[RMDB]
RNA sequence: GGGAACGACUCGAGUAGAGUCGAAAAAAGCGGCGGUCGAAUCGCGUUACUCGGCGGCGAUGACGUCGUCGAUGCGGGCGAUCAUCGUCGCGGCUUCGGUCGCGCUCUCGAUGGCUUCGCGCUUGACUGAUAGCUGGUACUUCGGUACCAGCUAUCAAAAAGAAACAACAACAACAAC
Reactivity to DMS in 0.01 (KOAc 150mM, MgCl2 10mM, bicine 150mM(pH8.5), 24C), signal-to-noise 1, nucleotides 027 to 126: a100a110g010c010g040g000c030g000g020u000c090g040a060a070u000c080g030c010g020u010u000a100c190u000c060g000g000c010g000g010c000g050a100u010g010a070c010g000u000c030g000u000c000g000a030u010g000c020g030g000g000c020g020a030u010c050a000u000c020g020u000c000g010c000g000g010c030u010u000c060g020g000u000c050g000c030g000c030u000c040u010c060g000a030u020g010g000c020u010u000c130g010c120g000c040u020u000g000a160c090
Reactivity to 2A3 in 0.01 (KOAc 150mM, MgCl2 10mM, bicine 150mM(pH8.5), 24C), signal-to-noise 3, nucleotides 027 to 126: a000a000g020c070g050g000c020g000g050u040c030g020a010a080u100c040g000c020g070u070u070a090c060u050c060g040g000c000g000g010c000g070a100u140g070a080c030g030u000c010g020u010c030g000a020u170g090c150g040g020g020c000g000a080u010c010a000u010c000g040u010c000g000c000g000g010c020u060u110c040g050g010u020c040g000c000g000c040u010c020u010c030g050a060u110g100g000c040u060u040c090g010c010g000c000u020u020g020a040c020
Conditions: 150 mM KOAc, 10 mM MgCl2 and 150 mM bicine (pH 8.5), 24 C. Structure probing data (DMS and 2A3) for a 177-nucleotide construct. DMS adducts were read by reverse transcription with MarathonRT. 2A3 adducts were read by reverse transcription with SuperScript II with manganese. It was measured as part of the RMDB library OK1LIB. For 2A3, 2,510 sequencing reads were counted. The DMS profile rests on 2,876 reads.